[RMDB]
RNA sequence: GGGAACGACUCGAGUAGAGUCGAAAAACGGCCCCCGCGUGCGCGUGGAGGAGCUCGGCGAGGCAAGUGCGCUGCGCAUUCGGGCGGCGCGGCCGCGCGACGGCGGCACUUACGAGGUCCGCGCCGACAAAAGGCACGUAUUCGUACGUGCCUUUUGAAAAGAAACAACAACAACAAC
Reactivity to DMS in 0.01 (KOAc 150mM, MgCl2 10mM, bicine 150mM(pH8.5), 24C), signal-to-noise 8, nucleotides 027 to 126: a130c100g010g000c030c010c010c010c030g020c040g020u000g010c080g040c010g040u000g010g010a120g010g000a120g010c070u000c020g010g000c040g010a060g010g010c070a080a110g010u000g010c020g010c030u000g000c040g000c060a170u000u010c090g010g010g020c010g010g010c010g010c110g010g010c000c010g010c030g000c050g010a060c180g000g000c010g010g020c030a050c040u000u010a090c130g010a150g010g000u000c010c010g000c020g010c000c000g010a140
Reactivity to 2A3 in 0.01 (KOAc 150mM, MgCl2 10mM, bicine 150mM(pH8.5), 24C), signal-to-noise 4, nucleotides 027 to 126: a000c020g100g010c010c000c000c010c010g010c020g020u090g030c150g000c000g060u050g020g040a120g020g030a070g030c020u020c070g040g040c040g020a040g030g040c060a070a030g050u050g080c030g030c080u080g000c070g010c030a040u130u160c070g060g080g010c020g000g000c070g000c000g080g040c010c000g000c020g010c050g110a090c050g070g070c040g030g030c030a010c030u090u140a050c080g090a060g030g100u010c000c010g010c010g010c030c000g000a020

Structure probing data (DMS and 2A3) for a 177-nucleotide construct. Source: RMDB library OK2TRN, as collected in RNAgym. DMS adducts were read by reverse transcription with MarathonRT. For DMS, 21,045 sequencing reads were counted.